The record gives the reactivity of an RNA of 177 nucleotides to 2A3 and DMS.
[RMDB]
RNA sequence: GGGAACGACUCGAGUAGAGUCGAAAAUUACCUCUGAAACAAUGAGGUGCAUUAAACCCGCAAGGUUUGGUGUUCAUGAUGAAAGGUCAGGUUGGUUCGUACCCAUUAGACGGUCGGCAGACUUGUACUGUCUAUAGAAUUUCGAUUCUAUAGACAGAAAAGAAACAACAACAACAAC
Reactivity to 2A3 in 0.01 (KOAc 150mM, MgCl2 10mM, bicine 150mM(pH8.5), 24C), signal-to-noise 8, nucleotides 027 to 126: u080u020a020c000c000u000c010u020g050a060a060a010c030a020a130u190g000a010g000g020u000g000c000a000u010u040a030a010a040c000c000c030g060c070a040a050g030g010u030u020u020g010g010u020g010u080u070c120a090u160g100a040u080g070a100a080a050g060g030u040c020a010g030g020u060u050g040g030u080u070c030g020u080a060c000c000c020a040u070u110a080g060a090c060g000g010u030c010g010g020c010a010g010a060c020u020u020g010u040a060
Reactivity to DMS in 0.01 (KOAc 150mM, MgCl2 10mM, bicine 150mM(pH8.5), 24C), signal-to-noise 9, nucleotides 027 to 126: u010u010a030c010c000u000c010u000g010a170a220a120c160a140a120u020g000a010g010g020u000g010c080a010u010u000a010a030a030c010c000c030g020c270a130a270g000g010u010u010u000g010g010u000g000u010u010c120a080u010g000a050u010g000a070a090a080g000g010u000c020a040g010g010u000u010g010g020u020u000c060g010u010a060c030c010c030a140u020u020a100g010a120c150g010g000u000c020g010g020c100a170g000a050c030u000u000g020u010a140